[RMDB]
RNA sequence: GGGAACGACUCGAGUAGAGUCGAAAAACGGGCAACCACGUCAGUGAAAGAGGGUCCCGCCGCGGCUGAUAGUGUAGCCAGAACUGUUAAGUUUGAAAAUAUCAGUCUUAACGUUCUGUGCGAAAACGAUGAAUGUUUGUUUCGACAAACAUUCAUCAAAAGAAACAACAACAACAAC
Reactivity to 2A3 in 0.01 (KOAc 150mM, MgCl2 10mM, bicine 150mM(pH8.5), 24C), signal-to-noise 3, nucleotides 027 to 126: a000c020g000g010g010c020a030a060c040c020a040c050g030u020c050a050g010u030g190a240a120a060g070a100g030g040g030u020c000c000c000g000c020c010g050c030g040g000c000u010g010a060u050a100g110u080g050u040a010g000c000c000a000g000a000a020c050u140g020u010u010a020a010g010u000u080u090g120a110a130a060a050u300a080u060c010a010g070u010c000u000u010a000a010c010g000u000u000c020u020g070u150g010c000g010a040a000a000a010c080
Reactivity to DMS in 0.01 (KOAc 150mM, MgCl2 10mM, bicine 150mM(pH8.5), 24C), signal-to-noise 4, nucleotides 027 to 126: a130c140g010g010g000c080a060a080c090c010a050c050g030u010c060a040g010u010g010a090a120a170g000a130g000g000g000u000c020c010c020g020c030c040g010c060g010g010c020u000g000a060u020a060g020u000g020u000a230g010c010c000a020g010a020a010c010u030g040u000u000a000a010g010u000u020u000g010a040a100a110a130u020a150u010c010a010g000u010c000u000u000a000a010c000g010u000u000c000u000g020u010g010c010g000a040a040a100a070c190
The record gives the reactivity of an RNA of 177 nucleotides to 2A3 and DMS. Reactivities are given for positions 27 through 126. For 2A3, 4,304 sequencing reads were counted. It was measured as part of the RMDB library OK2TST.